[RMDB]
The record gives the reactivity of an RNA of 177 nucleotides to 2A3 and DMS.
RNA sequence: GGGAACGACUCGAGUAGAGUCGAAAAGUAUGUGUGUGUUCAUGUCGGUACAUUGGAUGCUUGGUGCUGCUCGGUAAUUUUGAAUGCCUCACAUGCAUUAUGCCAUUAAUUCUCAUACACCUGACAGUGUCUGUAAUGAGUUCGCUCAUUACAGACAAAAAGAAACAACAACAACAAC
Reactivity to 2A3 in 0.01 (KOAc 150mM, MgCl2 10mM, bicine 150mM(pH8.5), 24C), signal-to-noise 3, nucleotides 027 to 126: g080u030a050u130g070u000g030u000g000u000g040u020u060c070a020u100g040u060c040g050g020u070a030c020a070u030u130g120g030a070u110g080c050u020u090g070g000u030g040c020u010g010c020u010c060g040g060u090a160a110u050u130u080u190g120a050a030u040g010c000c020u040c020a060c000a030u050g000c010a000u080u100a050u120g030c000c000a000u060u080a060a110u060u070c030u020c000a090u110a060c030a050c000c040u060g060a050c000a100g090
Reactivity to DMS in 0.01 (KOAc 150mM, MgCl2 10mM, bicine 150mM(pH8.5), 24C), signal-to-noise 4, nucleotides 027 to 126: g000u010a040u000g020u010g000u000g000u000g030u000u010c050a060u000g020u000c060g010g020u000a070c090a110u000u000g010g020a080u010g000c070u000u000g020g040u000g000c040u000g000c040u000c100g030g010u000a040a060u000u000u010u000g010a090a080u000g000c020c040u000c130a030c130a020u000g000c040a060u000u010a070u000g000c060c030a100u010u000a060a160u010u000c030u000c040a080u000a070c090a060c040c030u010g010a070c170a090g010

The 2A3 profile rests on 2,136 reads. High 2A3 reactivity points to a flexible backbone, as in loops and unpaired stretches. For 2A3 the reverse transcriptase was SuperScript II with manganese. For DMS, 5,180 sequencing reads were counted. It was measured as part of the RMDB library OK2TRN.